[RMDB]
RNA sequence: GGGAACGACUCGAGUAGAGUCGAAAAUAACUUCAGCUGCAUCAUGAAGAGUAGACAGAGAUUCUGGCGGUUGAGGGUUUCUUCGUAGAGGUUGAUCGAUUCUUAAUGUCCUGUGGAUUUUAAGUUCUACAGGACUACGAUUCGUCGUAGUCCUGUAAAAAGAAACAACAACAACAAC
Reactivity to DMS in 0.01 (KOAc 150mM, MgCl2 10mM, bicine 150mM(pH8.5), 24C), signal-to-noise 3, nucleotides 027 to 126: u020a080a170c030u010u000c040a030g020c010u010g020c020a050u010c070a100u030g030a040a010g000a120g010u030a090g010a070c300a120g010a120g010a130u010u010c020u000g000g000c040g010g020u030u030g030a060g000g030g030u010u040u000c030u020u010c160g000u020a100g010a030g000g040u010u000g010a100u010c020g000a050u000u000c000u010u000a070a030u010g000u000c010c010u020g010u010g000g000a020u000u030u020u060a070a090g000u010u000c030
Reactivity to 2A3 in 0.01 (KOAc 150mM, MgCl2 10mM, bicine 150mM(pH8.5), 24C), signal-to-noise 3, nucleotides 027 to 126: u180a070a030c010u010u000c000a000g000c000u030g020c000a040u010c010a060u270g010a030a050g010a030g110u130a030g040a090c090a030g150a000g020a040u050u000c020u080g060g000c000g040g010u010u030g000a010g010g000g000u010u050u010c010u040u050c030g040u060a090g030a040g160g010u030u100g040a060u040c070g020a010u140u000c010u000u110a130a080u070g000u050c000c030u120g060u230g020g040a020u000u000u050u130a110a020g000u040u000c000
Chemical mapping of a 177-nucleotide RNA with DMS and 2A3. Values cover nucleotides 27 to 126. The reactions ran in a buffer of 150 mM KOAc, 10 mM MgCl2 and 150 mM bicine (pH 8.5), at 24 C. The data come from the RNA Mapping Database (RMDB), libraries RFM100 and RFMREP.